[RMDB]
RNA sequence: GGGAACGACUCGAGUAGAGUCGAAAAGAUAUGGACCGGGAAAGGGAUGUCAAAUCAUGGAGCUGGUGUCGGAAACGACAUGGCCAGCUAUGAAGUGAUUUGACAUCCCUUUCACGGUCCUAAGUCAGAUUGUAUCUCUCUUCGGAGAGAUACAAUCAAAAGAAACAACAACAACAAC
Reactivity to DMS in 0.01 (KOAc 150mM, MgCl2 10mM, bicine 150mM(pH8.5), 24C), signal-to-noise 1, nucleotides 027 to 126: g020a080u000a300u010g000g000a000c000c000g000g000g020a020a040a000g020g000g000a010u000g000u020c000a000a000a000u000c000a010u000g000g000a020g010c000u010g000g000u000g000u000c010g000g000a140a120a210c020g000a000c000a230u010g090g000c020c000a000g000c000u000a140u000g000a190a300g000u000g010a000u000u000u000g000a020c000a000u010c010c020c000u000u000u000c000a030c010g000g000u000c000c000u000a000a040g000u010c040a170
This 177-nucleotide RNA was probed chemically with DMS. Source: RMDB library TTRINS, as collected in RNAgym. Conditions: 150 mM KOAc, 10 mM MgCl2 and 150 mM bicine (pH 8.5), 24 C. High DMS reactivity at an A or C suggests that its Watson-Crick edge is free.